[RMDB]
RNA sequence: GGGAACGACUCGAGUAGAGUCGAAAACGCCAUCUUGCAUGUCUUUGUUACCGCCUUUACCAAUGCCAGCGAUUUUGCCAUCUUUAAUACCAAUAUCCGCUUUAUAAAUACCGGUGUAAUCCACGAUAGAAAGGUUUAAGUUCGCUUAAACCUUUCUAAAAGAAACAACAACAACAAC
Reactivity to 2A3 in 0.01 (KOAc 150mM, MgCl2 10mM, bicine 150mM(pH8.5), 24C), signal-to-noise 1, nucleotides 027 to 126: c010g000c050c000a050u020c040u090u120g000c010a010u060g030u100c000u120u170u110g060u070u060a080c020c020g030c000c000u080u050u070a050c000c030a050a000u060g040c020c010a010g010c000g010a060u000u010u050u140g000c020c010a000u050c100u000u150u030a210a060u130a080c000c010a030a000u030a020u070c010c040g020c010u140u060u070a180u080a110a120a030u110a080c030c020g030g000u020g000u000a030a020u020c010c000a000c050g040a020u010
Reactivity to DMS in 0.01 (KOAc 150mM, MgCl2 10mM, bicine 150mM(pH8.5), 24C), signal-to-noise 2, nucleotides 027 to 126: c170g000c060c030a030u000c050u020u010g040c050a040u000g000u000c010u010u010u000g000u000u000a080c100c050g010c030c020u000u000u000a090c060c050a060a070u000g000c020c020a080g010c040g010a090u000u000u010u020g000c030c040a060u000c030u000u000u000a060a130u000a110c090c020a050a060u010a100u010c030c030g000c040u010u010u000a070u000a090a090a130u020a060c080c010g000g000u000g000u000a050a080u000c070c030a090c120g000a170u000

Record summary: This 177-nucleotide RNA was probed chemically with 2A3 and DMS. DMS (dimethyl sulfate) methylates the pairing face of unpaired adenines and cytosines.